[RMDB]
RNA sequence: GGGAACGACUCGAGUAGAGUCGAAAAGAUAUGGAGACAAGCAACAGCUGUAUGUCGGAAACGACAUGACAGACAUGCUUGCUCCUAAGUCAAAAGGUUCCGUCGUUGUUCGCAACGACGGAACCAAGAUGGAAAGUGAGUUCGCUCACUUUCCAUCAAAAGAAACAACAACAACAAC
Reactivity to 2A3 in 0.01 (KOAc 150mM, MgCl2 10mM, bicine 150mM(pH8.5), 24C), signal-to-noise 1, nucleotides 027 to 126: g040a010u040a010u080g020g030a030g040a160c010a020a010g020c010a000a130c060a210g060c000u010g000u010a010u010g010u030c010g000g000a020a000a010c030g000a000c010a030u050g180a060c000a000g020a090c020a060u030g010c010u000u000g010c000u010c010c000u010a010a010g020u030c010a020a030a140a060g000g020u000u000c010c010g000u000c010g010u000u030g010u070u110c300g000c160a010a020c000g000a010c000g000g010a000a000c000c000a000a010
Reactivity to DMS in 0.01 (KOAc 150mM, MgCl2 10mM, bicine 150mM(pH8.5), 24C), signal-to-noise 2, nucleotides 027 to 126: g000a030u000a300u000g020g000a020g000a150c000a000a010g000c010a030a050c300a130g000c020u000g000u000a020u000g010u000c000g000g000a070a060a160c000g000a010c000a010u010g020a010c000a000g010a100c130a110u000g000c000u000u000g010c000u000c000c000u000a010a060g000u010c020a110a120a170a130g000g000u000u000c010c010g000u000c000g020u000u000g000u010u010c260g010c010a000a000c000g020a010c010g000g000a010a010c010c000a000a010

Chemical mapping of a 177-nucleotide RNA with 2A3 and DMS.
It was measured as part of the RMDB library TTRDEL.
The RNA was probed in 150 mM KOAc, 10 mM MgCl2 and 150 mM bicine (pH 8.5) at 24 C.
Reactivities are given for positions 27 through 126.
2A3 adducts were read by reverse transcription with SuperScript II with manganese.
For DMS, 2,019 sequencing reads were counted.